[RMDB]
The record gives the reactivity of an RNA of 207 nucleotides to DMS and 2A3. For 2A3 the reverse transcriptase was SuperScript II with manganese. The reactions ran in a buffer of 150 mM KOAc, 10 mM MgCl2 and 150 mM bicine (pH 8.5), at 24 C. For 2A3, 628 sequencing reads were counted.
RNA sequence: GGGAACGACUCGAGUAGAGUCGAAAAUGAGCAAAGUGAGACUGGCCAGGAUUGGGGAGAUCGCUGCCCCUCGCCCCCAUAUCGGAAACAAAGUGAGGCCUCAUUGCCUGGAAGCGAUGGAGGAAUCCAAUUGGCUGGAAGUAGCCCUCUCCCACUACAUUAGGAGCGUAUUCGUACGCUCCUAAUGAAAAGAAACAACAACAACAAC
Reactivity to DMS in 0.01 (KOAc 150mM, MgCl2 10mM, bicine 150mM(pH8.5), 24C), signal-to-noise 1, nucleotides 027 to 156: u010g020a090g000c030a060a090a120g030u000g010a120g000a090c010u000g010g010c050c030a080g040g010a090u000u010g010g000g030g020a290g050a100u030c050g020c060u000g000c000c020c050c030u000c050g010c020c000c010c000c040a120u000a100u000c000g010g000a130a060a100c050a040a100a110g030u000g000a060g000g030c000c020u000c110a100u010u000g000c000c000u010g030g000a180a080g030c030g010a040u000g020g010a050g040g000a090a050u000c040c000a050a130u000u000g000g010c020u000g000g000a020a060g000u010a110g000c030c000c010u000c040u020c020c000c020a100c090u010a170
Reactivity to 2A3 in 0.01 (KOAc 150mM, MgCl2 10mM, bicine 150mM(pH8.5), 24C), signal-to-noise 1, nucleotides 027 to 156: u090g020a010g000c050a060a090a120g020u040g060a060g030a020c030u050g040g050c000c040a060g010g000a010u020u040g040g000g040g000a040g040a010u180c050g000c080u020g050c050c000c030c000u000c050g010c000c000c050c020c010a000u010a030u080c000g030g140a120a060a000c020a040a000a030g040u120g040a010g030g100c030c030u040c000a000u030u030g040c050c060u060g030g030a070a000g030c040g010a000u130g040g000a040g000g010a030a010u000c000c000a000a230u080u000g010g020c010u040g010g050a110a050g010u040a000g000c000c060c000u050c010u020c010c000c000a030c030u110a010